[RMDB]
RNA sequence: GGGAACGACUCGAGUAGAGUCGAAAACAUGGUGUAUGCACUUUAUUAAUAAACAAUUACAGAUACAAAAACUUGAGUCUCUCGAGGUCUGCGAUGAGGCGGUGGGUGGAACGCUCCAGCUUGCGGCGAAGCUGGCUCACGAAGCGAGACAGUACUCAUGGCGAGUAGUAUUCGUACUACUCGCCAUAAAAGAAACAACAACAACAAC
Reactivity to 2A3 in 0.01 (KOAc 150mM, MgCl2 10mM, bicine 150mM(pH8.5), 24C), signal-to-noise 1, nucleotides 027 to 156: c010a100u080g010g080u050g040u170a150u090g040c010a000c050u130u100u100a090u050u160a200a110u150a050a120a040c100a090a000u210u170a050c010a090g210a050u150a120c040a070a090a000a190a000c100u010u030g000a000g020u040c000u010c000u000c100g010a040g000g030u020c000u000g010c020g060a060u060g030a010g060g000c030g060g000u070g010g000g010u010g030g000a050a020c030g000c040u000c000c020a000g040c000u040u120g010c030g140g000c060g000a000a000g020c060u030g010g010c020u020c030a050c060g100a020a030g030c000g030a020g040a000c010a000g110u040a060c070u040c060

Chemical mapping of a 207-nucleotide RNA with 2A3. The data come from the RNA Mapping Database (RMDB), library OK3TST. The reactions ran in a buffer of 150 mM KOAc, 10 mM MgCl2 and 150 mM bicine (pH 8.5), at 24 C.